[RMDB]
RNA sequence: GGGAACGACUCGAGUAGAGUCGAAAAAAAGGACGGUGGGGAGUGCCCAGCGGCCGACAGGAGUAAUUCCCGCCGAAACAGGGUUUUCACCCUUCCUUUCUUCGGGUGUCCUUCCUCGCGCCCGCAGCUUAAUCUAUCUGUUCGCAGAUAGAUUAAGAAAAGAAACAACAACAACAAC
Reactivity to 2A3 in 0.01 (KOAc 150mM, MgCl2 10mM, bicine 150mM(pH8.5), 24C), signal-to-noise 1, nucleotides 027 to 126: a000a000a000g030g030a010c000g050g030u020g000g030g000g000a060g080u050g000c050c020c000a020g030c060g070g030c060c040g030a020c040a060g050g030a180g050u050a060a070u050u000c030c000c000g000c010c010g050a050a080a040c100a060g020g000g020u040u090u230u260c110a090c000c000c070u000u010c000c010u000u040u040c000u040u020c000g000g040g010u000g010u030c000c040u030u030c000c010u020c040g010c010g010c010c000c000g000c000a010g050
Reactivity to DMS in 0.01 (KOAc 150mM, MgCl2 10mM, bicine 150mM(pH8.5), 24C), signal-to-noise 2, nucleotides 027 to 126: a040a040a030g010g010a060c090g010g030u000g020g010g000g010a060g020u000g000c020c010c010a100g010c030g000g010c040c030g000a060c100a070g000g000a060g010u000a040a070u000u000c000c000c000g010c020c030g010a050a050a060c210a010g000g010g010u000u000u010u010c170a060c000c000c000u010u000c010c020u000u000u000c010u000u000c010g020g000g010u000g010u000c050c050u000u000c030c020u000c090g010c080g000c030c000c010g020c160a080g010